[RMDB]
RNA sequence: GGGAACGACUCGAGUAGAGUCGAAAAAAAGGCUUCGGCCUUUAUCUUGAUAUGGAUUGAACUACGGAAUGAAGACCCAACAGCAAAGCUCGGAAACGAGCUUUGACAUGGGUUCAAAGUCCGCAAUCCUAAGUCGUCAGUAACUGUUCGCAGUUAAAUGUACGUUUGAGUUCGCUCAAACGUACAUAAAAGAAACAACAACAACAAC
Reactivity to 2A3 in 0.01 (KOAc 150mM, MgCl2 10mM, bicine 150mM(pH8.5), 24C), signal-to-noise 1, nucleotides 027 to 156: a000a000a000g050g000c050u100u140c090g180g000c020c030u050u000u000a080u020c020u060u100g000a000u000a020u210g000g040a020u000u020g050a130a080c120u220a090c290g050g000a070a040u070g000a090a100g030a030c000c010c030a030a030c050a090g030c020a060a000a020g000c000u000c000g090g000a010a090a070c000g000a000g000c050u000u000u000g000a000c000a020u050g000g050g000u040u040c000a000a030a020g050u000c000c000g000c030a000a000u000c000c000u000a080a000g010u060c020g090u120c130a040g080u080a010a010c010u020g080u090u060c300g000c100a020g050u090u120a080a150
An RNA of 207 nucleotides, treated with 2A3 and read out base by base.
It was measured as part of the RMDB library RNAMAK.
For 2A3 the reverse transcriptase was SuperScript II with manganese.
For 2A3, 543 sequencing reads were counted.
The RNA was probed in 150 mM KOAc, 10 mM MgCl2 and 150 mM bicine (pH 8.5) at 24 C.